[RMDB]
RNA sequence: GGGAACGACUCGAGUAGAGUCGAAAAUGCGCAGGAGCCAACGCGAGGUGAUGCCCUGCAUCUGCGGAGCGGACUUGGUCGUGGUUGCCAGGUUCCGCGCCGCGGCCGUACCCAGGCUCAGCUGGGAGCACCGGGCAUGGUUCGCCAUGCCCGGUGCAAAAGAAACAACAACAACAAC
Reactivity to 2A3 in 0.01 (KOAc 150mM, MgCl2 10mM, bicine 150mM(pH8.5), 24C), signal-to-noise 1, nucleotides 027 to 126: u250g020c020g000c000a020g000g000a010g040c040c000a010a110c170g130c050g200a110g000g080u060g000a140u170g010c070c000c000u010g030c060a020u000c010u060g020c050g000g020a000g020c000g000g010a000c000u010u010g000g000u030c040g060u220g060g070u300u180g000c000c000a000g020g000u200u020c020c000g000c000g000c000c000g000c000g000g000c010c000g010u070a160c000c000c000a010g000g000c050u040c110a060g000c020u010g000g000g000a100

An RNA of 177 nucleotides, treated with 2A3 and read out base by base. The reactions ran in a buffer of 150 mM KOAc, 10 mM MgCl2 and 150 mM bicine (pH 8.5), at 24 C. It was measured as part of the RMDB library RFM100. Reactivities are rounded to 0.1 and cut off at 0 and 3.